[RMDB]
RNA sequence: GGGAACGACUCGAGUAGAGUCGAAAAGGGAGGUAGGCGGGACGAUGACCUAGGACUGCAAGCAAAUCUCUUGGGUGGCAGGGUCCCCUGUGUGCUGUAGCAGAACUACAACCUCUCCCGCCGUUAGAUAAUGACUCCAUUUCGAUGGAGUCAUUAUAAAAGAAACAACAACAACAAC
Reactivity to DMS in 0.01 (KOAc 150mM, MgCl2 10mM, bicine 150mM(pH8.5), 24C), signal-to-noise 7, nucleotides 027 to 126: g000g010g010a070g020g020u010a100g000g030c010g010g000g000a050c190g020a040u010g000a110c300c220u000a030g010g000a220c020u000g010c020a120a060g000c030a040a080a130u010c060u000c080u010u010g000g010g010u010g020g010c030a110g010g000g000u000c020c010c000c010u000g010u000g020u000g020c060u000g010u010a110g000c010a040g000a050a230c010u000a010c090a040a150c200c120u000c010u000c000c000c000g020c020c010g010u010u010a040g010
Reactivity to 2A3 in 0.01 (KOAc 150mM, MgCl2 10mM, bicine 150mM(pH8.5), 24C), signal-to-noise 4, nucleotides 027 to 126: g040g020g010a050g030g060u180a060g010g000c030g000g010g000a020c130g040a050u050g040a020c010c010u010a010g020g020a020c010u010g010c010a030a070g000c000a010a150a230u090c060u050c030u120u070g060g000g030u170g050g040c090a140g200g090g050u210c020c000c020c000u010g030u020g010u030g050c010u010g030u050a030g010c000a000g010a050a010c010u010a010c020a060a040c000c010u020c000u000c020c000c000g010c000c000g000u000u030a020g000